An RNA of 207 nucleotides, treated with DMS and 2A3 and read out base by base. It was measured as part of the RMDB library OK3TST. The reactions ran in a buffer of 150 mM KOAc, 10 mM MgCl2 and 150 mM bicine (pH 8.5), at 24 C. The 2A3 profile rests on 1,634 reads. The DMS profile rests on 3,842 reads.

RNA sequence: GGGAACGACUCGAGUAGAGUCGAAAACUGCAGGUCAACGGUACUUCUUCAGAUCAGCUAUUGCAGAAGAAAGGUGACCCAAGCGCUCUGGGCCAGUGCGACUGUAUAUAGGAGCUUGUUAUUUUAACCAGAAGCUAACUCUCUCCGAAACAAUGAGUAAAUCAAAAUUAUUCGUAAUUUUGAUUUAAAAAGAAACAACAACAACAAC
Reactivity to DMS in 0.01 (KOAc 150mM, MgCl2 10mM, bicine 150mM(pH8.5), 24C), signal-to-noise 2, nucleotides 027 to 156: c040u020g030c040a070g020g020u010c050a060a120c020g000g010u010a080c030u000u020c030u010u000c040a100g020a130u000c070a160g020c080u000a070u000u000g010c020a130g010a080a110g010a050a110a270g000g020u000g020a050c040c020c050a080a090g010c050g010c060u010c060u000g020g020g040c030c040a100g020u010g030c030g010a080c050u000g010u020a100u000a180u010a080g000g020a090g010c030u000u000g020u010u010a130u000u000u000u010a080a160c060c030a110g020a080a090g020c030u000a030a070c040u000c010u000c020u000c030c030g000a130a100a070c060a050a070u000g010a170g030
Reactivity to 2A3 in 0.01 (KOAc 150mM, MgCl2 10mM, bicine 150mM(pH8.5), 24C), signal-to-noise 3, nucleotides 027 to 156: c010u040g000c030a020g030g020u060c020a080a020c050g000g060u060a020c060u010u020c000u060u020c010a020g030a210u060c050a040g080c070u140a090u230u130g000c020a000g010a070a000g030a030a070a010g000g020u030g000a030c000c010c000a080a050g060c030g010c030u000c020u030g000g040g020c010c020a040g020u030g070c010g040a050c020u020g050u110a060u030a030u070a200g040g010a010g020c000u030u010g050u110u070a180u140u170u060u020a070a070c020c010a010g010a130a010g030c010u010a020a020c010u000c000u020c000u000c060c020g040a060a060a030c040a060a110u130g000a020g100